[RMDB]
RNA sequence: GGGAACGACUCGAGUAGAGUCGAAAAACUUGGAAUAACAGUACCUUCUAGUUUAGGCUAGAAUGGUUUUGGUGAUUAAAAUGGGUUACCACGGGUGAAAUCUAUUGUAGAAGGGCAACCUUAUGCACGAUGCGUGACGAUUCGUCGUCACGCAUCGAAAAGAAACAACAACAACAAC
Reactivity to 2A3 in 0.01 (KOAc 150mM, MgCl2 10mM, bicine 150mM(pH8.5), 24C), signal-to-noise 1, nucleotides 027 to 126: a010c050u080u220g120g040a020a010u150a160a060c000a000g000u000a020c000c020u000u000c000u000a050g000u000u000u050a300g110g000c000u000a000g000a000a060u140g000g000u000u000u050u000g000g000u170g020a090u300u000a040a000a030a030u140g030g000g020u130u010a060c010c000a030c130g000g060g000u160g030a160a000a000u020c100u110a150u110u030g010u060a010g020a180a000g020g040g000c050a070a070c000c000u000u000a140u050g130c090a030
Annotation:
This 177-nucleotide RNA was probed chemically with 2A3. For 2A3 the reverse transcriptase was SuperScript II with manganese. The reactions ran in a buffer of 150 mM KOAc, 10 mM MgCl2 and 150 mM bicine (pH 8.5), at 24 C.